[RMDB]
RNA sequence: GGGAACGACUCGAGUAGAGUCGAAAAGGGGUCCGAACCGAAGAACUGUUACUGGAAUGGGUUGUCAGCUGAAGCCUCCACGGCUUGGAUUUACCCAUUAGAGGUAACAGGGAGGUUCGGACGGAGGCACCCAAAGGACGUCCUUCGGGACGUCCAACUAACCACGAUUGUUCGCAAUCGUGGUUAGAAAAGAAACAACAACAACAAC
Reactivity to 2A3 in 0.01 (KOAc 150mM, MgCl2 10mM, bicine 150mM(pH8.5), 24C), signal-to-noise 2, nucleotides 027 to 156: g140g000g070g000u000c000c000g000a000a000c010c010g160a160a100g020a110a030c010u000g010u010u000a000c020u090g110g190a240a230u120g100g000g010u090u030g040u060c010a010g010c040u030g020a100a000g010c000c000u070c030c000a030c020g020g000c030u040u170g060g000a030u300u110u160a040c020c000c000a020u100u070a030g050a010g000g000u000a000a000c000a000g000g000g010a020g000g000u000u010c000g000g000a000c000g000g000a010g000g020c030a050c000c000c010a080a060a010g010g000a000c010g020u010c000c000u030u110c200g000g000g020a000c000g000u010c000c000a000a000
Reactivity to DMS in 0.01 (KOAc 150mM, MgCl2 10mM, bicine 150mM(pH8.5), 24C), signal-to-noise 1, nucleotides 027 to 156: g040g080g040g000u000c000c000g010a000a010c000c000g020a150a200g000a240a210c000u000g000u010u000a020c000u030g000g050a100a040u050g030g000g000u010u000g000u000c100a050g010c010u010g000a020a130g000c000c020u000c040c070a300c170g000g000c020u000u010g040g000a120u000u010u000a030c000c000c010a120u000u000a110g030a300g010g000u000a000a040c000a060g010g010g010a170g000g000u010u000c010g010g000a000c000g010g010a070g060g000c010a150c040c040c010a090a150a100g040g010a030c010g000u000c000c010u000u000c300g050g010g040a010c000g030u000c000c000a000a030
An RNA of 207 nucleotides, treated with 2A3 and DMS and read out base by base. The reactions ran in a buffer of 150 mM KOAc, 10 mM MgCl2 and 150 mM bicine (pH 8.5), at 24 C. The data come from the RNA Mapping Database (RMDB), library RNAMAK. Reactivities are given for positions 27 through 156. For DMS the reverse transcriptase was MarathonRT.